[RMDB]
RNA sequence: GGGAACGACUCGAGUAGAGUCGAAAAAUUCUGAAUUCCUUCUCCAUUUGGUGGAAUCCUUCACUUGGCCCAUACCUGUGGCCUCUGCAUCUUCUUGGGUCACCUGGAGCAAAACCUCAUUACAAAGACGGACGUCACUAUUCGUAGUGACGUCCGUAAAAGAAACAACAACAACAAC
Reactivity to 2A3 in 0.01 (KOAc 150mM, MgCl2 10mM, bicine 150mM(pH8.5), 24C), signal-to-noise 1, nucleotides 027 to 126: a000u190u060c050u070g090a050a090u000u050c040c040u000u060c020u000c030c040a210u140u050u140g100g000u000g000g080a000a000u060c000c000u060u090c130a050c150u100u210g000g000c000c010c000a080u110a140c050c090u060g080u070g170g000c000c010u000c000u010g010c020a040u010c000u180u000c000u040u000g000g000g000u000c000a000c020c050u010g000g000a000g050c070a000a090a060a130c030c000u050c040a110u000u180a100c030a120a020a020g130
This 177-nucleotide RNA was probed chemically with 2A3.
The RNA was probed in 150 mM KOAc, 10 mM MgCl2 and 150 mM bicine (pH 8.5) at 24 C.
High 2A3 reactivity points to a flexible backbone, as in loops and unpaired stretches.
Reactivities are given for positions 27 through 126.
It was measured as part of the RMDB library OK1LIB.